[RMDB]
Chemical mapping of a 207-nucleotide RNA with DMS and 2A3. For DMS the reverse transcriptase was MarathonRT. The RNA was probed in 150 mM KOAc, 10 mM MgCl2 and 150 mM bicine (pH 8.5) at 24 C.
RNA sequence: GGGAACGACUCGAGUAGAGUCGAAAAGGCGGUCGAAGUCGACACAACCGGAGGGGGAGCGUGAUGGUCACAGCCAGCAACGUCGCUGACUUCCACGACGCCGGAGAAGGUUCGUUCUGGUGGCACGAUCCGGCCGCCGACGAAUACCUCAUCACCGGAAACUGUGUUAUUUCGAUAACACAGUUUCAAAAGAAACAACAACAACAAC
Reactivity to DMS in 0.01 (KOAc 150mM, MgCl2 10mM, bicine 150mM(pH8.5), 24C), signal-to-noise 2, nucleotides 027 to 156: g040g020c000g050g010u000c040g020a010a080g010u010c020g000a080c050a120c070a070a130c020c020g020g010a150g000g010g010g050g020a110g050c030g040u000g010a060u000g000g020u000c070a180c190a090g030c000c020a060g020c020a150a090c090g010u010c110g020c020u020g000a120c030u010u010c000c060a060c010g030a040c010g040c000c020g020g000a110g020a100a050g020g010u000u020c020g010u010u020c000u020g040g020u000g010g040c050a150c030g010a300u000c020c060g000g000c020c010g040c000c000g000a030c020g020a120a050u000a060c020c030u000c050a100u000c010a130c020c030g000
Reactivity to 2A3 in 0.01 (KOAc 150mM, MgCl2 10mM, bicine 150mM(pH8.5), 24C), signal-to-noise 5, nucleotides 027 to 156: g010g000c010g000g000u010c020g010a050a010g070u050c030g080a030c040a010c010a120a120c030c040g070g020a100g020g050g010g010g000a030g020c030g000u020g030a060u040g020g020u090c100a050c030a200g030c020c020a010g030c070a090a060c020g050u080c050g030c060u030g020a080c000u130u030c050c000a020c040g100a030c030g000c020c000g000g030a030g030a030a040g040g020u050u030c010g030u080u010c080u170g010g020u010g020g000c080a040c300g060a090u100c060c020g010g010c000c010g000c020c000g000a000c000g010a010a040u180a200c000c010u060c020a080u080c030a050c060c040g030